[RMDB]
RNA sequence: GGGAACGACUCGAGUAGAGUCGAAAAACUUUGGCCGACGCUGCUAGGCGGGUGCCCACUGCUGUCUGGCCCGGCGCCGCGCUAGGGCGCACGUUUCGCUCUGCGGAGGGUAACCGGGCUGAAAUAAUUCGUGGUUAACAUUCGUGUUAACCACGAAAAAAGAAACAACAACAACAAC
Reactivity to DMS in 0.01 (KOAc 150mM, MgCl2 10mM, bicine 150mM(pH8.5), 24C), signal-to-noise 2, nucleotides 027 to 126: a110c070u000u000u000g000g050c060c010g000a050c080g020c040u000g000c110u020a080g020g000c010g010g000g040u000g030c080c000c010a060c120u000g020c090u000g010u020c060u000g000g030c000c020c020g010g000c300g000c000c000g010c020g000c060u030a040g000g010g020c020g070c090a030c170g010u000u000u020c020g010c000u010c000u000g030c020g000g000a170g020g000g020u010a090a120c000c000g010g000g000c000u020g010a030a040a040u000a100a150